[RMDB]
RNA sequence: GGGAACGACUCGAGUAGAGUCGAAAAUAUAUGAAAGAAGGUUGCUAUAUCCCGACAUAUGAAACGGUGGAUACUGCGGAAAAAUGGGCGAGGAAGUUAUCGACAUUUGGGGGCUACCGGAAUAGCAAGAUCGAAGUCACUCGGGCUACCUUUAAGCUAUCUCCUUACGAUUCGUCGUAAGGAGAUAAAAAGAAACAACAACAACAAC
Reactivity to DMS in 0.01 (KOAc 150mM, MgCl2 10mM, bicine 150mM(pH8.5), 24C), signal-to-noise 1, nucleotides 027 to 156: u030a100u010a120u000g010a070a020a140g030a110a090g010g020u000u010g030c010u060a130u000a120u040c000c000c000g020a100c070a160u010a150u010g020a060a080a080c080g030g000u020g050g010a120u010a050c040u010g070c000g020g010a080a040a040a070a060u000g000g010g020c000g010a120g040g000a080a100g030u000u000a030u000c020g020a060c020a110u010u010u000g020g060g010g030g000c050u010a010c020c140g040g000a070a060u000a030g030c000a050a150g000a040u000c060g000a050a080g030u010c070a100c030u000c030g020g000g030c010u000a060c100c010u000u000u000a040a100g010c120
Reactivity to 2A3 in 0.01 (KOAc 150mM, MgCl2 10mM, bicine 150mM(pH8.5), 24C), signal-to-noise 1, nucleotides 027 to 156: u070a000u020a050u080g000a040a090a050g040a010a010g040g000u030u080g010c010u020a020u010a070u160c000c010c000g040a070c040a020u150a130u240g100a150a020a020c070g000g110u040g010g000a020u050a040c060u080g040c090g010g070a060a000a000a030a010u040g000g130g000c000g010a020g010g010a130a000g000u070u120a050u080c000g020a000c100a050u160u150u040g040g000g020g000g000c000u000a010c090c010g000g020a030a010u020a060g000c030a000a010g000a000u010c070g050a090a000g010u040c010a000c060u070c000g000g010g030c000u060a070c000c000u020u110u190a040a040g000c000

Conditions: 150 mM KOAc, 10 mM MgCl2 and 150 mM bicine (pH 8.5), 24 C. Chemical mapping of a 207-nucleotide RNA with DMS and 2A3. DMS adducts were read by reverse transcription with MarathonRT. Source: RMDB library OK3TST, as collected in RNAgym.